[RMDB]
RNA sequence: GGGAACGACUCGAGUAGAGUCGAAAAUCAAGAGAUCAACUUUCAAGUAUCUGACAUCAGUUGAACUCUUGACAUAGUCGACGAUGUCGAUUACAUGAAGGAACUUCAUGUAUGAAAGUUGACUAUAGAUAGAAUUGUCAUUCGUGACGGUUCUAUCAAAAGAAACAACAACAACAAC
Reactivity to 2A3 in 0.01 (KOAc 150mM, MgCl2 10mM, bicine 150mM(pH8.5), 24C), signal-to-noise 9, nucleotides 027 to 126: u070c020a030a020g030a000g010a180u000c000a000a000c000u020u030u010c020a070a050g060u030a090u030c060u120g030a010c010a030u030c030a060g010u000u000g030a070a050c010u000c000u020u070g000a000c010a020u080a000g000u010c000g000a000c000g010a020u060g040u070c010g010a010u020u010a000c000a000u000g000a000a000g180g050a060a040c010u000u000c000a000u000g000u000a020u020g030a010a000a000g000u000u000g000a000c000u020a010u040a060
Reactivity to DMS in 0.01 (KOAc 150mM, MgCl2 10mM, bicine 150mM(pH8.5), 24C), signal-to-noise 9, nucleotides 027 to 126: u020c030a070a060g000a040g000a130u000c000a000a000c010u010u000u000c050a050a150g010u030a050u010c060u040g020a020c180a020u000c070a090g020u010u000g000a050a040c010u000c090u010u010g010a080c250a080u010a020g000u000c000g000a000c000g000a030u010g010u010c100g010a060u000u000a010c000a000u000g010a010a010g010g020a130a300c050u000u000c000a000u000g000u000a020u000g010a050a030a060g010u000u000g000a010c010u000a060u020a080
This 177-nucleotide RNA was probed chemically with 2A3 and DMS. The 2A3 profile rests on 110,200 reads. The RNA was probed in 150 mM KOAc, 10 mM MgCl2 and 150 mM bicine (pH 8.5) at 24 C. Source: RMDB library OK1LIB, as collected in RNAgym. DMS adducts were read by reverse transcription with MarathonRT.